[RMDB]
RNA sequence: GGGAACGACUCGAGUAGAGUCGAAAAAAAUUAGCCAGGUGUGGUGGCGCACCUGUAGUCCUGGCUACUUUGGAGGCUGAGGUGGAAGGAUCACUUGAGCCCAGGAGUUCGAGUCUAUGGUGAGCCACAUUAUUCGCGUAUUCGUACGCGAAUAAUGAAAAGAAACAACAACAACAAC
Reactivity to DMS in 0.01 (KOAc 150mM, MgCl2 10mM, bicine 150mM(pH8.5), 24C), signal-to-noise 4, nucleotides 027 to 126: a040a050a090u010u000a040g020c020c000a030g010g020u000g010u000g020g020u000g010g010c030g000c010a020c000c020u000g020u010a060g010u000c000c000u000g000g000c010u000a030c050u010u000u000g010g030a180g000g010c020u010g010a020g010g020u000g010g000a200a120g010g010a130u000c020a010c010u000u000g000a030g010c020c010c030a230g010g000a060g010u000u010c080g010a090g010u000c040u000a070u000g020g010u000g000a070g010c000c020a130
Reactivity to 2A3 in 0.01 (KOAc 150mM, MgCl2 10mM, bicine 150mM(pH8.5), 24C), signal-to-noise 2, nucleotides 027 to 126: a000a000a000u120u030a030g020c020c000a030g030g000u100g010u040g040g070u010g030g020c000g000c010a000c000c000u040g070u040a000g060u010c010c010u000g000g030c010u030a070c020u060u050u070g140g020a150g050g010c030u060g090a030g040g020u040g010g030a200a140g230g060a110u210c010a000c000u020u020g080a010g000c000c020c000a000g000g030a030g000u100u190c090g030a070g090u010c070u130a100u080g050g000u040g000a000g010c000c000a010
This 177-nucleotide RNA was probed chemically with DMS and 2A3. Reactivities are given for positions 27 through 126. For 2A3 the reverse transcriptase was SuperScript II with manganese. The 2A3 profile rests on 2,128 reads. Source: RMDB library OK2TRN, as collected in RNAgym.